[RMDB]
RNA sequence: GGGAACGACUCGAGUAGAGUCGAAAACUCCAGCUGAAUCGAAGCUAGUAUCGUGUGCGAGUUCGUACAUGAUGCUUUAGCUUGGCACAACUCAAUGUUGUGAUAGCUGGCACAUUGAGUUAUGUACGAUGAACAGUUAUUUCGAUAAUUGUUCAUCAAAAGAAACAACAACAACAAC
Reactivity to DMS in 0.01 (KOAc 150mM, MgCl2 10mM, bicine 150mM(pH8.5), 24C), signal-to-noise 9, nucleotides 027 to 126: c070u010c010c020a090g020c070u010g010a100a120u030c070g010a020a010g010c000u000a020g010u000a000u000c000g020u000g010u000g000c000g000a300g020u040u040c010g040u000a010c000a000u000g010a010u000g000c000u010u040u010a000g020c000u000u000g000g010c020a010c040a010a000c000u000c090a050a040u020g010u010u010g020u000g000a100u030a040g020c080u010g000g000c130a040c060a040u010u010g000a070g010u000u000a050u010g010u010a090c170
Reactivity to 2A3 in 0.01 (KOAc 150mM, MgCl2 10mM, bicine 150mM(pH8.5), 24C), signal-to-noise 9, nucleotides 027 to 126: c010u000c010c010a020g010c040u110g110a090a100u130c120g040a030a000g000c000u000a000g010u010a000u000c010g000u010g010u010g010c020g030a190g300u260u300c020g010u010a000c000a000u000g000a000u000g000c000u070u040u030a000g000c000u010u010g030g000c020a000c010a020a020c000u030c040a040a080u110g010u070u040g010u100g020a030u100a040g030c040u050g050g000c010a010c000a050u050u080g030a020g040u060u060a070u100g060u040a030c080
Annotation:
This 177-nucleotide RNA was probed chemically with DMS and 2A3.